Source: RMDB library OK1LIB, as collected in RNAgym. Structure probing data (DMS and 2A3) for a 177-nucleotide construct. The reactions ran in a buffer of 150 mM KOAc, 10 mM MgCl2 and 150 mM bicine (pH 8.5), at 24 C. 2A3 adducts were read by reverse transcription with SuperScript II with manganese. Reactivities are given for positions 27 through 126.
RNA sequence: GGGAACGACUCGAGUAGAGUCGAAAAGAAUAUAAGAGCGCAGUAAAUGUGAGAGCAAACUGCGCCCGGACUGUAGGAUCCGGUGGCACAGCAACGCUCAUUCACAACACGCUGUGCCACAUGAAGAAUCCACGGUAGUCUUCGGACUACCGUGGAUAAAAGAAACAACAACAACAAC
Reactivity to DMS in 0.01 (KOAc 150mM, MgCl2 10mM, bicine 150mM(pH8.5), 24C), signal-to-noise 2, nucleotides 027 to 126: g000a140a240u190a050u000a090a010g000a020g000c000g020c000a020g000u000a070a140a090u010g000u000g000a190g010a100g040c010a020a060a030c000u010g000c000g000c010c010c000g000g000a070c040u030g010u010a050g000g000a300u000c000c000g010g040u000g000g000c000a000c000a000g010c020a110a060c290g020c080u000c150a130u050u140c200a080c260a070a050c170a060c230g000c000u000g010u000g050c000c000a050c000a000u000g000a050a120g040a160
Reactivity to 2A3 in 0.01 (KOAc 150mM, MgCl2 10mM, bicine 150mM(pH8.5), 24C), signal-to-noise 3, nucleotides 027 to 126: g010a020a000u190a030u070a180a060g010a020g000c000g000c010a010g000u020a000a170a050u050g010u050g040a080g000a010g040c000a120a260a020c000u000g000c030g000c010c000c000g000g000a000c020u150g140u300a010g040g070a070u010c010c000g000g000u000g000g000c000a020c030a000g000c000a040a110c150g000c030u070c020a120u150u180c070a050c080a190a100c050a040c190g000c000u010g010u000g030c000c000a010c000a000u120g030a060a070g090a100